[RMDB]
RNA sequence: GGGAACGACUCGAGUAGAGUCGAAAAAGCGGAGCUAUUACGAUAGCUCCGCAAUGAUACAUAUUAAACAUGCCUUCUAUUCACUGUGCCAUCUUACAUCCGUAGGUGAUCAGAGGGGAAAAGAAGAGCUAGAGCAACUCCCACACUCAUGAGCGUCCUCAUACUGUUCUGGGCGCUUCUCACAGGUGCUUCUUUUAGUGUCUCCCAUUGGCCCAGAUCGGUACUGCGCGAGUGAGAUAUCUAGUCCUAUGCUACGGCAUAGGACAAAACAUAAAUUCGUUUAUGUUAAAAGAAACAACAACAACAAC
Reactivity to DMS in 0.01 (KOAc 150mM, MgCl2 10mM, bicine 150mM(pH8.5), 24C), signal-to-noise 4, nucleotides 027 to 266: a190g010c000g000g010a010g020c010u000a010u000u020a110c150g000a040u000a010g010c000u000c000c000g030c000a010a000u000g000a240u000a130c120a110u020a110u020u000a120a140a120c120a060u020g000c000c010u000u000c010u010a200u000u000c010a050c010u000g000u000g000c270c010a030u010c000u010u010a050c030a090u020c220c230g010u000a020g010g010u000g000a120u010c010a020g000a030g020g000g010g000a020a050a150a070g000a020a010g000a130g010c010u000a070g000a120g020c120a150a120c140u000c010c010c010a130c270a140c020u000c010a020u000g000a300g010c000g020u010c300c130u000c180a260u010a010c010u000g000u000u000c010u010g000g000g000c000g000c190u000u010c050u000c070a080c180a040g010g020u000g000c050u000u000c250u020u000u000u000a030g020u000g010u000c050u000c050c040c020a140u010u010g020g010c020c010c000a010g010a020u000c020g010g010u000a010c280u010g000c030g000c010g000a290g010u000g000a010g000a110u000a030u000c060u000a110g000u000c000c000u010a000u000g000c010u010a090c210g040g020c000a000u000a010g000g000a000c000a000a020
Reactivity to 2A3 in 0.01 (KOAc 150mM, MgCl2 10mM, bicine 150mM(pH8.5), 24C), signal-to-noise 3, nucleotides 027 to 266: a060g000c000g000g000a000g000c020u000a000u040u100a030c150g010a040u010a000g000c000u020c000c000g000c000a000a000u000g000a030u080a040c030a010u220a080u140u300a110a150a000c110a030u140g020c000c000u000u010c000u040a100u040u030c020a020c070u070g060u050g240c060c010a030u060c020u120u090a080c020a110u110c070c070g010u020a000g000g020u010g040a070u060c010a010g050a030g120g080g000g020a010a080a000a020g000a010a000g040a030g030c050u060a030g020a010g140c030a060a120c020u030c020c010c000a020c020a000c020u010c000a000u010g030a010g020c010g050u120c010c100u080c010a010u040a050c020u000g030u050u030c010u010g000g000g060c060g200c120u070u040c010u020c030a140c000a030g030g050u020g030c000u040u160c020u080u270u040u100a090g040u080g060u050c030u070c000c030c030a140u040u130g070g030c000c000c000a010g000a000u010c010g020g020u030a040c070u080g000c000g000c010g000a000g000u010g000a000g000a010u070a060u040c090u080a040g000u000c000c010u000a000u000g000c000u010a050c160g040g000c010a010u000a010g000g000a000c000a000a010